The data come from the RNA Mapping Database (RMDB), library OK1LIB. The record gives the reactivity of an RNA of 177 nucleotides to 2A3. Reactivities are given for positions 27 through 126. The RNA was probed in 150 mM KOAc, 10 mM MgCl2 and 150 mM bicine (pH 8.5) at 24 C.

[RMDB]
RNA sequence: GGGAACGACUCGAGUAGAGUCGAAAAGUCCUAGCGAAAAGCUAGGACAAGUGCAUCUAAAAUGUCAUCGCGAGCCUUAAGAUGACAAGAUGCACCAGGCUCGCAAGUCGAGGAGAACUCGACAAAAAUAGCUCCUGAUCUUCGGAUCAGGAGCUAUAAAAGAAACAACAACAACAAC
Reactivity to 2A3 in 0.01 (KOAc 150mM, MgCl2 10mM, bicine 150mM(pH8.5), 24C), signal-to-noise 2, nucleotides 027 to 126: g000u010c000c000u000a000g030c000g090a250a240a200a000g000c000u010a000g000g000a010c000a000a000g000u000g000c000a000u000c000u060a000a060a240a140u170g020u000c000a000u010c000g040c070g140a150g140c040c010u040u170a090a040g020a040u010g030a020c010a010a000g000a000u000g000c020a000c010c000a000g010g000c010u000c000g060c070a070a080g120u000c000g000a000g040g000a040g000a030a020c000u000c040g090a050c110a000a060a000a000